Background:
Chemical mapping of a 207-nucleotide RNA with DMS and 2A3. The 2A3 profile rests on 472 reads. Conditions: 150 mM KOAc, 10 mM MgCl2 and 150 mM bicine (pH 8.5), 24 C.

RNA sequence: GGGAACGACUCGAGUAGAGUCGAAAAUUCAAUGGAAACCGCCCCUCUCCUAGGUUAGCUGUUCAAAGAUGCUGUUCAUGCAGAUCGAAUCAGCAAUGAGAUUUUAAAGCUGGUGUCCCUAACUUGGGCCAGUGUUGGGGUCCGACGAGCAAUGGAAACUAGUCCGUAUGUUCGCAUACGGACUAGUAAAAGAAACAACAACAACAAC
Reactivity to DMS in 0.01 (KOAc 150mM, MgCl2 10mM, bicine 150mM(pH8.5), 24C), signal-to-noise 1, nucleotides 027 to 156: u000u000c080a030a120u050g000g030a040a020a120c080c020g010c010c040c020c080u000c060u000c020c010u000a060g020g010u000u000a030g020c000u000g010u020u010c050a200a070a090g010a110u010g010c000u010g020u000u020c110a100u010g000c040a050g020a080u010c060g010a200a110u000c020a050g050c060a070a120u010g020a190g010a140u000u000u000u020a040a130a300g080c030u000g000g010u000g010u010c020c060c030u000a030a050c080u000u010g010g010g000c000c030a060g020u000g000u010u030g010g020g030g020u010c060c030g010a110c000g040a250g020c020a100a130u000g010g000a120a110
Reactivity to 2A3 in 0.01 (KOAc 150mM, MgCl2 10mM, bicine 150mM(pH8.5), 24C), signal-to-noise 1, nucleotides 027 to 156: u070u010c050a010a040u070g090g060a020a050a050c050c050g010c000c000c000c000u040c000u060c000c000u000a010g050g040u090u060a040g040c010u070g000u120u050c040a110a060a150g010a020u070g170c010u000g050u160u170c160a130u300g000c010a000g010a010u040c020g040a020a040u190c010a000g010c070a010a080u130g030a070g000a040u000u300u070u110a070a050a000g000c000u040g000g020u020g070u060c040c010c000u010a020a030c070u070u110g000g000g000c000c010a100g020u110g000u050u090g010g000g000g010u070c020c010g030a060c050g000a030g000c040a050a050u100g000g010a020a130